[RMDB]
RNA sequence: GGGAACGACUCGAGUAGAGUCGAAAAGUUUGUGUCCCUGGGUACUUGAGAUUAGGGAGUGGUGAUGACUCUUAACGAGCAUGCUGCCUUCAAGCAUCUGUUUAACAAAGCACAUCUUGCACCGCCCUUAAUCCAUUUAACCCUGAGUGGACACAGACGGAGUGGAGGUAUUCGUACCUCCACUCCGAAAAGAAACAACAACAACAAC
Reactivity to 2A3 in 0.01 (KOAc 150mM, MgCl2 10mM, bicine 150mM(pH8.5), 24C), signal-to-noise 1, nucleotides 027 to 156: g020u010u010u010g020u020g030u000c000c000c000u000g030g000g020u000a010c000u080u020g070a110g000a300u000u000a000g020g030g030a300g030u030g000g000u000g000a040u050g100a190c020u030c000u070u020a040a070c050g020a060g010c040a000u040g010c030u070g050c050c100u130u170c040a070a000g000c000a030u010c010u040g130u070u070u070a130a070c170a210a080a030g070c040a030c020a100u060c070u050u160g030c030a000c000c000g000c020c000c000u000u000a020a000u000c000c000a000u010u010u000a130a120c000c030c000u020g030a070g040u200g010g000a000c000a000c000a000g000a000